[RMDB]
RNA sequence: GGGAACGACUCGAGUAGAGUCGAAAAUGAACCAGGAAUUCCUAGUAGUCGCGUGUCACUAACGGGCGACGACUGCGUCCCUGUUCUUUGUACACACCGCCCGUCGUUAUCUAAGAUGGUGCUAUGUCACUGGCAUACAGUUCGCUGUAUGCCAGUGAAAAGAAACAACAACAACAAC
Reactivity to DMS in 0.01 (KOAc 150mM, MgCl2 10mM, bicine 150mM(pH8.5), 24C), signal-to-noise 1, nucleotides 027 to 126: u000g000a010a040c180c030a050g020g020a110a120u010u010c080c040u000a020g010u000a030g000u000c000g020c050g000u000g000u000c100a090c240u000a060a100c130g060g020g000c090g020a030c000g000a090c110u010g000c090g000u000c030c010c000u000g020u000u000c010u000u000u000g020u000a060c220a130c100a060c070c120g010c010c010c000g000u000c040g000u010u000a090u020c160u010a060a190g000a030u000g000g020u000g010c030u000a080u010g010u000
Reactivity to 2A3 in 0.01 (KOAc 150mM, MgCl2 10mM, bicine 150mM(pH8.5), 24C), signal-to-noise 2, nucleotides 027 to 126: u120g010a010a040c050c000a010g060g030a020a150u170u090c010c010u020a040g000u010a010g020u010c020g000c140g140u070g040u050c070a080c170u100a100a070c050g000g020g000c030g050a040c010g000a000c030u040g000c020g040u040c000c000c010u000g080u030u020c050u040u060u120g140u080a040c060a010c040a010c050c040g030c040c060c000g050u010c010g040u060u100a110u140c110u140a120a050g010a040u050g010g030u110g100c020u070a080u120g060u040